[RMDB]
RNA sequence: GGGAACGACUCGAGUAGAGUCGAAAAUGACCUCUUUGAUGAAGCUUACGAUAGACGUAGCGCAGACUUAAAUGGGAUUGCUAACCUUCGUCUGCAAACAGUGGCAACCUUUUUAGGCAUUAAGGGUCGAGGUCAUAAUAGCUUAGAAGAUGCCAGACUAUUUACCCCUAUUCGUAGGGGUAAAUAGAAAAGAAACAACAACAACAAC
Reactivity to 2A3 in 0.01 (KOAc 150mM, MgCl2 10mM, bicine 150mM(pH8.5), 24C), signal-to-noise 7, nucleotides 027 to 156: u020g010a010c020c000u000c070u100u160u160g140a130u090g060a100a040g040c050u120u120a040c040g080a110u090a150g080a060c030g030u040a010g010c020g020c060a010g030a070c010u120u220a050a110a100u220g030g030g060a110u100u160g070c060u080a100a120c000c010u040u080c040g020u000c010u020g010c020a000a020a020c070a050g040u060g040g000c010a010a070c000c010u000u010u020u050u110a060g000g000c000a020u040u030a030a030g030g010g000u030c040g000a000g010g000u000c000a000u020a060a060u040a010g040c050u100u050a030g030a110a010g030a060u030g010c000c020a010g030a030
Reactivity to DMS in 0.01 (KOAc 150mM, MgCl2 10mM, bicine 150mM(pH8.5), 24C), signal-to-noise 3, nucleotides 027 to 156: u000g000a030c020c010u030c010u000u030u030g010a120u000g010a080a130g020c020u000u000a060c020g010a200u000a090g020a130c040g020u000a040g020c050g000c020a080g000a060c020u000u000a030a060a110u010g020g030g000a160u010u000g000c040u000a090a080c030c030u000u000c070g030u000c030u000g010c050a080a040a080c110a140g030u000g000g000c020a060a040c010c010u000u000u000u000u010a030g030g000c020a050u000u000a080a170g010g030g010u000c080g000a040g030g000u000c020a020u000a030a120u010a100g000c050u000u000a120g000a090a070g020a100u000g010c030c010a160g020a300
Chemical mapping of a 207-nucleotide RNA with 2A3 and DMS. The reactions ran in a buffer of 150 mM KOAc, 10 mM MgCl2 and 150 mM bicine (pH 8.5), at 24 C. 2A3 adducts were read by reverse transcription with SuperScript II with manganese. The DMS profile rests on 6,899 reads.